RNA sequence: GGGAACGACUCGAGUAGAGUCGAAAAAUAAAGAGCGUCGCACACACACAGACUAAGUGUGACACUGACAGACGCUAAACCGCUCUGUCAGUGUGCGAGAUAUCGGUAUUAAAUAGAGCGGAAAAAACAUACCAAUCUUCUUCGGAAGAUUGGUAUGAAAAGAAACAACAACAACAAC
Reactivity to 2A3 in 0.01 (KOAc 150mM, MgCl2 10mM, bicine 150mM(pH8.5), 24C), signal-to-noise 4, nucleotides 027 to 126: a010u120a000a070a010g030a000g030c040g100u020c010g020c010a010c000a000c000a000c000a000c000a060g200a270c180u210a240a120g000u000g000u000g050a020c020a010c080u010g000a010c000a000g010a000c070g000c040u020a100a050a010c020c020g010c040u000c000u000g000u000c000a000g000u000g000u000g010c010g010a020g010a020u170a060u080c020g030g040u060a060u090u150a110a090a110u160a040g060a010g050c030g060g000a040a130a000a000a020a000
Reactivity to DMS in 0.01 (KOAc 150mM, MgCl2 10mM, bicine 150mM(pH8.5), 24C), signal-to-noise 5, nucleotides 027 to 126: a070u000a040a080a070g010a100g010c100g010u000c010g020c050a060c060a300c020a010c010a020c030a090g010a130c220u010a080a080g010u010g010u000g000a090c110a030c010u000g000a010c000a000g000a020c100g000c030u010a030a070a110c170c080g000c040u010c000u000g000u000c000a000g000u010g020u000g020c010g020a060g010a130u000a040u000c040g010g000u010a040u000u000a030a070a060u010a060g000a050g010c050g000g010a010a030a060a090a030a100